An RNA of 177 nucleotides, treated with 2A3 and DMS and read out base by base. For DMS the reverse transcriptase was MarathonRT.
RNA sequence: GGGAACGACUCGAGUAGAGUCGAAAACGUGGCGGCGCUGCGUCCGUUCACUGCCCUGAGCACCGAGAACAACCACGCCGGGGACGGGGGAGAAGCUGGCCGCCGGCAAAACGAACAGGUGCUGCGCCUUACAGGGUGAAUUCGUUCACCCUGUAAGAAAAGAAACAACAACAACAAC
Reactivity to 2A3 in 0.01 (KOAc 150mM, MgCl2 10mM, bicine 150mM(pH8.5), 24C), signal-to-noise 4, nucleotides 027 to 126: c040g030u030g020g000c000g010g010c040g050c130u270g030c090g080u040c010c000g010u120u090c020a020c040u050g000c020c010c000u020g100a030g010c010a010c020c010g090a060g050a300a060c050a040a030c040c040a100c130g010c000c000g000g000g000g020a020c010g010g000g010g040g010a170g050a070a030g110c030u050g010g000c020c040g140c030c010g010g000c040a040a030a010a020c060g050a030a030c030a070g000g000u000g000c000u040g030c080g090c010
Reactivity to DMS in 0.01 (KOAc 150mM, MgCl2 10mM, bicine 150mM(pH8.5), 24C), signal-to-noise 5, nucleotides 027 to 126: c160g020u000g000g010c020g000g000c060g030c150u010g010c100g020u010c010c010g000u000u000c020a060c030u010g010c020c010c010u010g010a060g000c010a020c020c010g010a200g010a120a150c070a090a100c100c090a120c200g000c010c000g010g000g020g000a040c020g000g000g000g000g020a150g010a110a100g020c020u000g010g020c010c010g000c000c010g000g010c020a070a040a070a090c170g000a060a110c070a130g010g000u010g000c000u010g000c110g010c130